[RMDB]
RNA sequence: GGGAACGACUCGAGUAGAGUCGAAAAAGAGUACCACGGCUUGGGUAAAGGCGUCGACUAGUGGUGAACGUCGGCAGGCGAUGACUGUGACCUGUCGGUGUAUUGCAGUCUACCAAAGCGAGGGGCGUGUCUGUUUGCCCGUGCGGAGGGAAACGGCCCAUUUGAAUCAGUUCGCUGAUUCAAAUGGAAAAGAAACAACAACAACAAC
Reactivity to DMS in 0.01 (KOAc 150mM, MgCl2 10mM, bicine 150mM(pH8.5), 24C), signal-to-noise 1, nucleotides 027 to 156: a090g000a160g010u000a110c020c010a110c090g020g010c030u000u000g020g030g010u010a040a040a050g000g020c030g030u000c020g020a080c050u000a100g020u000g030g010u000g030a070a110c010g030u020c000g030g000c000a050g010g020c000g000a150u010g020a090c070u000g060u010g000a040c000c020u030g030u000c020g030g000u020g020u010a060u000u000g000c010a070g030u000c000u000a300c010c030a020a200a240g000c000g030a120g000g010g040g010c020g030u010g050u000c090u000g000u000u000u000g010c010c000c000g010u000g000c050g000g000a300g010g010g010a020a050a040c070g020g000c160
Reactivity to 2A3 in 0.01 (KOAc 150mM, MgCl2 10mM, bicine 150mM(pH8.5), 24C), signal-to-noise 5, nucleotides 027 to 156: a010g070a010g020u060a040c010c010a030c050g040g000c040u060u060g050g030g030u090a090a100a050g030g000c040g030u060c020g040a060c030u050a050g040u020g070g010u030g030a110a010c010g020u010c000g010g000c010a000g000g010c020g050a070u120g030a050c050u080g070u050g080a130c010c000u000g010u000c020g010g010u040g010u040a110u020u220g020c020a000g000u000c030u050a050c030c020a060a040a010g010c030g030a110g020g010g000g000c030g040u110g040u050c080u080g080u030u090u120g060c000c000c010g000u060g000c020g010g040a040g010g020g000a000a080a030c020g070g000c000

Record summary:
Conditions: 150 mM KOAc, 10 mM MgCl2 and 150 mM bicine (pH 8.5), 24 C. This 207-nucleotide RNA was probed chemically with DMS and 2A3. For DMS, 3,166 sequencing reads were counted. Values are in units of 0.01, from 0 to 300, in steps of 10. DMS adducts were read by reverse transcription with MarathonRT. The data come from the RNA Mapping Database (RMDB), library RSTRND.